An RNA of 177 nucleotides, treated with 2A3 and DMS and read out base by base. It was measured as part of the RMDB library OK2TRN. The DMS profile rests on 5,016 reads. The RNA was probed in 150 mM KOAc, 10 mM MgCl2 and 150 mM bicine (pH 8.5) at 24 C.

RNA sequence: GGGAACGACUCGAGUAGAGUCGAAAACUGCCUGGGCAACAUAGUGAGACCUCAUCUCUUAAAAAAGAAAAAUUAGCUGGUGCUGUGCACCUGUAGUUCCAGUUACUUGGGAGGCUAAGGCUAGAGGCGUUCUGAAGAUAUUCGUAUCUUCAGAACGAAAAGAAACAACAACAACAAC
Reactivity to 2A3 in 0.01 (KOAc 150mM, MgCl2 10mM, bicine 150mM(pH8.5), 24C), signal-to-noise 3, nucleotides 027 to 126: c010u020g030c020c010u050g010g030g010c020a050a010c010a090u120a050g070u060g050a040g060a050c010c000u030c010a060u030c010u000c000u070u060a090a040a000a010a050a010g060a040a120a040a030a070u050u020a010g000c020u030g050g000u010g010c050u120g070u130g030c030a050c060c020u040g040u050a030g000u030u010c020c000a030g020u050u050a060c030u060u030g020g010g000a030g000g000c010u030a050a010g020g020c030u050a030g020a020g130g000
Reactivity to DMS in 0.01 (KOAc 150mM, MgCl2 10mM, bicine 150mM(pH8.5), 24C), signal-to-noise 4, nucleotides 027 to 126: c080u000g020c020c010u000g010g000g030c030a050a050c060a070u010a060g010u010g010a070g010a080c020c030u000c040a110u000c010u000c020u000u010a000a030a060a070a090a080g010a050a040a070a070a040u010u000a040g000c040u000g010g030u000g010c020u010g020u010g000c040a040c020c030u000g010u000a070g010u000u000c010c010a030g010u000u000a030c120u010u000g010g000g020a040g010g010c030u000a030a060g010g010c070u000a080g010a070g010g020